RNA sequence: GGGAACGACUCGAGUAGAGUCGAAAAGCGUACUACGAGAGGCAGACUGGAGAGACACUGAAUUUAAAUCCCAAAUAGGAUUUAUUAGUCAGUGUCUCGUUGAAAGUCUGCUCCCCACCUCGUAUCGCAAACCUUAACUGUUUCGACAGUUAAGGAAGCGAUAGAUUUACUUCGGUAAAUCUAUCGCAAAAGAAACAACAACAACAAC
Reactivity to DMS in 0.01 (KOAc 150mM, MgCl2 10mM, bicine 150mM(pH8.5), 24C), signal-to-noise 2, nucleotides 027 to 156: g020c020g020u010a080c060u000a040c020g020a050g000a300g030g010c010a010g030a000c010u000g030g000a240g010a040g000a020c000a030c000u000g000a020a100u000u000u000a010a000a000u000c000c000c030a060a170a220u000a040g000g000a020u020u000u000a010u000u010a040g000u000c000a000g020u000g000u000c000u000c020g010u000u000g000a160a290a050g000u000c000u000g000c020u010c030c040c020c070a300c130c010u000c060g000u010a030u000c030g040c010a120a100a100c010c000u000u000a010a020c000u010g010u000u000u000c300g020a120c000a000g000u000u000a010a010g000g000a040a050
Reactivity to 2A3 in 0.01 (KOAc 150mM, MgCl2 10mM, bicine 150mM(pH8.5), 24C), signal-to-noise 4, nucleotides 027 to 156: g020c010g060u080a050c040u010a010c030g010a000g000a000g000g000c000a010g000a020c010u000g000g040a030g000a000g000a000c000a000c000u000g010a000a000u020u000u000a010a010a000u030c020c040c060a140a190a130u290a120g000g010a000u000u000u030a050u040u060a080g080u020c010a000g000u000g000u010c010u000c000g000u020u010g000a000a000a000g000u000c000u000g000c000u020c000c000c000c000a060c010c000u000c000g020u010a050u300c030g000c010a070a010a100c000c040u150u150a000a000c000u000g060u010u140u080c130g120a020c010a000g000u000u000a000a000g000g020a010a020
The record gives the reactivity of an RNA of 207 nucleotides to DMS and 2A3. Reactivities are given for positions 27 through 156. The reactions ran in a buffer of 150 mM KOAc, 10 mM MgCl2 and 150 mM bicine (pH 8.5), at 24 C.